An RNA of 177 nucleotides, treated with 2A3 and DMS and read out base by base. It was measured as part of the RMDB library OK1LIB. The reactions ran in a buffer of 150 mM KOAc, 10 mM MgCl2 and 150 mM bicine (pH 8.5), at 24 C. The DMS profile rests on 2,261 reads.

RNA sequence: GGGAACGACUCGAGUAGAGUCGAAAAUCUUUGAAUCUUGUGAGUGAUCAGCCAAAAGAAGAAUUCAAAGUGUCGAAACUUAUCUCAGAUCUUUUUGGUGGCACAGUGGCAACACAGAGCAAGCAACAGUCAUAUGGUUCUUCGGAACCAUAUGACUAAAAGAAACAACAACAACAAC
Reactivity to 2A3 in 0.01 (KOAc 150mM, MgCl2 10mM, bicine 150mM(pH8.5), 24C), signal-to-noise 4, nucleotides 027 to 126: u010c000u030u030u050g100a040a020u040c000u030u060g070u040g040a040g070u040g090a280u140c080a080g060c010c040a000a040a010a000g190a060a020g030a030a050u140u160c100a080a120a030g020u060g060u050c100g090a100a040a060c030u130u160a080u070c110u020c090a120g030a230u060c000u060u140u050u100u150g090g010u110g000g080c000a020c040a080g020u080g080g000c030a090a040c020a030c010a010g070a000g020c010a030a000g020c000a040a100c010
Reactivity to DMS in 0.01 (KOAc 150mM, MgCl2 10mM, bicine 150mM(pH8.5), 24C), signal-to-noise 2, nucleotides 027 to 126: u020c020u000u000u000g000a080a090u020c030u000u010g000u000g020a300g010u020g040a040u000c120a070g000c030c010a030a010a060a100g020a030a030g020a100a040u050u050c070a010a010a050g020u000g010u050c100g020a090a110a040c060u010u020a040u050c120u000c130a050g000a050u000c010u000u000u000u000u000g000g000u000g010g020c010a070c090a090g000u000g000g000c180a060a120c000a020c050a100g000a150g000c050a040a060g000c300a140a080c150